Source information:
Chemical mapping of a 177-nucleotide RNA with 2A3 and DMS. The DMS profile rests on 1,664 reads. For 2A3 the reverse transcriptase was SuperScript II with manganese. The reactions ran in a buffer of 150 mM KOAc, 10 mM MgCl2 and 150 mM bicine (pH 8.5), at 24 C. 2A3 is a SHAPE reagent: it acylates the 2'-hydroxyl of flexible nucleotides of all four kinds.

RNA sequence: GGGAACGACUCGAGUAGAGUCGAAAAUUGAUGAUGAUAGGUGACAUGCCAAAGACAAGAGAUAUAAUUAUGAAACAUGGUUAUGUUAUCAAACCAGUACAAUGGUACGGCUACGAUACAAUGUUAGUCUGUCCGAUGAAUUCGUUCAUCGGACAGAAAAAGAAACAACAACAACAAC
Reactivity to 2A3 in 0.01 (KOAc 150mM, MgCl2 10mM, bicine 150mM(pH8.5), 24C), signal-to-noise 2, nucleotides 027 to 126: u070u090g020a030u020g000a060u000g020a040u040a100g040g000u020g050a040c020a050u030g010c000c050a000a180a060g120a050c050a000a080g000a030g080a140u060a040u180a130a200u240u170a060u100g110a170a060a000c050a090u040g040g030u170u230a050u030g090u010u000a000u090c000a080a070a000c000c030a030g090u100a020c000a000a130u190g070g010u020a000c000g020g000c000u040a000c080g020a050u050a110c060a030a050u090g050u080u000a000g000
Reactivity to DMS in 0.01 (KOAc 150mM, MgCl2 10mM, bicine 150mM(pH8.5), 24C), signal-to-noise 2, nucleotides 027 to 126: u050u000g010a060u040g010a050u000g000a040u050a090g000g030u000g000a020c030a090u030g020c000c000a050a100a130g000a220c080a070a240g000a020g000a060u010a040u010a030a100u010u000a170u000g000a130a040a030c070a030u000g000g000u000u000a000u000g040u010u010a080u040c000a070a060a120c020c030a200g030u050a050c190a030a060u030g010g000u020a020c090g010g010c000u000a030c140g000a050u040a040c160a120a080u020g000u000u000a110g000